This 207-nucleotide RNA was probed chemically with 2A3 and DMS. DMS adducts were read by reverse transcription with MarathonRT. The reactions ran in a buffer of 150 mM KOAc, 10 mM MgCl2 and 150 mM bicine (pH 8.5), at 24 C. High DMS reactivity at an A or C suggests that its Watson-Crick edge is free.
RNA sequence: GGGAACGACUCGAGUAGAGUCGAAAAUACGGCCAAGUUCGUACCGUCGCGGCCUAGCAUGUAGAGCACGGAAUCUCCACCUACGUAGACCGUCCCGUCCAGGCCUUCGUAUAGUGACGUUCUUUCUUCGGGACUUUCGAACGAAUAAUUCAAGCUCCUUGUCGAAAAGUUUCGACUUUUCGACAAGAAAAGAAACAACAACAACAAC
Reactivity to 2A3 in 0.01 (KOAc 150mM, MgCl2 10mM, bicine 150mM(pH8.5), 24C), signal-to-noise 3, nucleotides 027 to 156: u120a000c000g010g010c040c040a090a030g040u030u060c040g020u030a050c010c020g040u010c070g010c020g050g000c010c000u020a040g020c050a060u130g020u110a020g010a020g080c100a040c120g030g060a100a120u030c040u010c070c040a070c020c030u060a040c030g040u040a010g030a040c020c020g020u020c000c000c020g020u030c030c040a010g030g000c010c000u040u110c060g020u030a070u040a180g070u090g060a040c060g020u010u030c030u060u120u030c020u120u090c040g030g010g020a060c000u080u090u070c050g010a020a030c010g010a080a060u160a170a080u160u110c040a070a030g010c010u000c000
Reactivity to DMS in 0.01 (KOAc 150mM, MgCl2 10mM, bicine 150mM(pH8.5), 24C), signal-to-noise 2, nucleotides 027 to 156: u000a040c030g050g000c000c030a090a140g010u000u000c090g030u000a130c010c060g020u010c100g040c080g000g040c000c000u000a120g070c080a110u010g010u010a060g030a070g000c080a290c070g010g000a080a120u010c030u010c050c000a060c050c040u010a030c030g030u000a110g010a040c010c030g020u000c000c040c060g000u010c050c050a100g030g010c000c020u000u000c020g020u020a070u000a080g000u000g000a140c130g000u000u000c030u000u000u000c070u000u010c010g000g000g010a060c010u000u010u030c100g030a010a060c020g000a120a100u030a050a260u010u000c000a040a110g010c110u000c030